[RMDB]
The record gives the reactivity of an RNA of 177 nucleotides to DMS.
For DMS the reverse transcriptase was MarathonRT.
Conditions: 150 mM KOAc, 10 mM MgCl2 and 150 mM bicine (pH 8.5), 24 C.
RNA sequence: GGGAACGACUCGAGUAGAGUCGAAAAGUUGAACCAGAUGGGCGCACAGGUCGAAGGUGCGGGUUCGCCGACAAUGACCAUCACCGGUGUCCCGCGGCUGCAUCCAACCGAGCACCGGGUGAUCGGAUGUUAAAGGCUGGUUCGCCAGCCUUUAACAAAAAGAAACAACAACAACAAC
Reactivity to DMS in 0.01 (KOAc 150mM, MgCl2 10mM, bicine 150mM(pH8.5), 24C), signal-to-noise 2, nucleotides 027 to 126: g020u000u020g020a080a110c030c020a110g010a090u030g010g020g000c030g010c060a050c040a070g020g010u010c130g000a130a140g020g020u000g020c070g000g000g000u000u000c030g030c030c000g010a030c100a070a080u000g000a060c000c020a040u000c010a110c050c010g010g020u000g000u010c070c040c070g010c090g010g020c060u020g000c130a110u000c110c060a090a110c130c070g010a180g000c020a010c000c010g000g010g000u000g000a080u010c030g010g000a200
It was measured as part of the RMDB library OK2TST.